[RMDB]
RNA sequence: GGGAACGACUCGAGUAGAGUCGAAAACGGCGAGUAAUUCGGUUGGUGCCAUCAAUGCCACCUGUUUGCCGUGGGCAAUCGCACGCAGCGCGGCGAUGGCAGCGACCAGCGUUUUACCGGAACCUACCGCGAUUUAUAUUUUCGAAUAUAAAUCGCGAAAAGAAACAACAACAACAAC
Reactivity to DMS in 0.01 (KOAc 150mM, MgCl2 10mM, bicine 150mM(pH8.5), 24C), signal-to-noise 5, nucleotides 027 to 126: c090g000g020c050g010a090g020u010a050a080u000u010c080g020g000u000u000g010g010u000g020c020c020a030u000c030a110a300u010g000c000c020a050c050c010u000g010u000u000u000g000c030c120g030u000g010g010g010c130a090a060u000c300g010c020a040c080g020c020a020g000c190g020c030g010g030c270g000a010u000g010g000c010a030g000c030g020a020c010c000a060g030c090g010u000u000u000u010a070c020c000g010g000a090a170c040c020u000a080c210
Reactivity to 2A3 in 0.01 (KOAc 150mM, MgCl2 10mM, bicine 150mM(pH8.5), 24C), signal-to-noise 5, nucleotides 027 to 126: c020g160g020c040g020a100g080u090a070a040u070u060c060g070g010u020u020g100g250u010g000c010c000a000u010c020a040a080u130g010c010c010a060c010c010u020g040u010u040u040g060c080c070g060u140g000g120g000c100a050a080u110c040g000c050a020c020g010c010a020g010c010g010c010g070g000c000g000a000u000g010g000c010a010g030c000g010a010c020c000a000g020c050g010u010u000u030u040a020c020c000g010g060a040a070c010c010u030a070c040
Structure probing data (DMS and 2A3) for a 177-nucleotide construct. The 2A3 profile rests on 9,988 reads. The reactions ran in a buffer of 150 mM KOAc, 10 mM MgCl2 and 150 mM bicine (pH 8.5), at 24 C. Values cover nucleotides 27 to 126. It was measured as part of the RMDB library OK2TST. For 2A3 the reverse transcriptase was SuperScript II with manganese.